[RMDB]
RNA sequence: GGGAACGACUCGAGUAGAGUCGAAAAAGAAGCAAUGGCGUAGACCUCAGGCACCGAGUAAGUGUAUCGGAGCAAGCAUGACCAGAGUAGAGCCAGAGACAUACGUGGGUCAAAAGUGGGGCGUAAAGCAAGGACGGUCCAAGGGUGAGUCGACCUCGAAUUUUAUAAUGUUCGCAUUAUAAAAUUCAAAAGAAACAACAACAACAAC
Reactivity to 2A3 in 0.01 (KOAc 150mM, MgCl2 10mM, bicine 150mM(pH8.5), 24C), signal-to-noise 5, nucleotides 027 to 156: a000g110a060a010g020c060a040a080u100g050g000c030g060u080a030g030a150c010c020u030c050a030g070g000c020a020c030c020g030a020g080u150a190a040g030u110g060u130a090u070c030g020g010a010g020c040a050a030g010c020a060u090g040a050c010c040a040g010a020g080u100a010g020a010g040c010c020a020g000a000g010a050c020a030u130a040c050g030u060g020g040g000u060c000a080a040a010a010g080u080g020g000g020g020c020g020u080a090a050a010g030c020a040a030g030g000a000c030g010g020u020c030c010a050a070g050g010g010u050g010a000g010u010c020g020a070c010c020u030c030
Reactivity to DMS in 0.01 (KOAc 150mM, MgCl2 10mM, bicine 150mM(pH8.5), 24C), signal-to-noise 3, nucleotides 027 to 156: a110g010a110a120g010c040a110a130u000g020g000c030g040u010a090g010a120c040c010u010c030a160g030g000c040a090c020c030g010a170g010u000a110a140g030u010g000u010a110u000c030g020g010a150g020c080a070a100g020c070a130u000g030a130c020c020a150g010a120g020u000a050g000a160g030c020c020a180g020a120g010a100c060a130u010a040c040g040u000g020g000g020u000c030a060a060a040a120g040u000g000g020g010g030c000g030u010a050a050a110g010c040a060a100g020g060a080c000g010g030u000c050c010a030a110g010g000g020u000g030a080g020u000c030g000a110c050c030u000c190
Annotation:
An RNA of 207 nucleotides, treated with 2A3 and DMS and read out base by base. Reactivities are rounded to 0.1 and cut off at 0 and 3. For DMS the reverse transcriptase was MarathonRT. The 2A3 profile rests on 5,967 reads.